[RMDB]
An RNA of 177 nucleotides, treated with DMS and 2A3 and read out base by base.
RNA sequence: GGGAACGACUCGAGUAGAGUCGAAAAAAGUUUGGUUCGCUUCUUCUUCUCUCAAGUUCGUCCAGACAAAAGUAAACUACAUCUAAGUAGCCCAAAUUGUAUUGAAGAACCAAGCUGAAGAAAGACAGGUAUUCGUUUAUUUCGAUAAACGAAUACCAAAAGAAACAACAACAACAAC
Reactivity to DMS in 0.01 (KOAc 150mM, MgCl2 10mM, bicine 150mM(pH8.5), 24C), signal-to-noise 2, nucleotides 027 to 126: a140a050g000u000u010u000g030g010u000u000c030g000c090u000u000c030u000u000c030u000u000c060u000c030u000c070a050a080g000u000u000c060g020u020c060c040a110g010a040c050a030a010a030a060g020u000a090a220a090c020u000a030c010a070u020c140u000a120a100g010u000a030g000c010c010c020a040a120a150u000u000g010u010a100u020u000g030a080a090g000a020a020c000c010a040a050g030c080u000g000a060a040g000a040a030a060g000a090c210a090
Reactivity to 2A3 in 0.01 (KOAc 150mM, MgCl2 10mM, bicine 150mM(pH8.5), 24C), signal-to-noise 2, nucleotides 027 to 126: a000a000g060u040u030u020g010g040u000u000c000g000c020u040u010c000u040u010c000u000u030c030u030c020u000c040a060a080g010u040u010c030g030u010c050c010a010g050a030c040a040a040a010a010g030u040a020a070a020c010u010a010c020a070u060c050u210a260a060g000u010a020g040c020c000c010a030a040a010u100u070g060u020a090u050u050g030a120a030g010a000a020c010c000a010a010g000c010u020g020a050a010g010a020a120a010g120a030c090a050
For 2A3 the reverse transcriptase was SuperScript II with manganese. The 2A3 profile rests on 1,781 reads. The DMS profile rests on 1,618 reads. The reactions ran in a buffer of 150 mM KOAc, 10 mM MgCl2 and 150 mM bicine (pH 8.5), at 24 C. The data come from the RNA Mapping Database (RMDB), library OK2TST.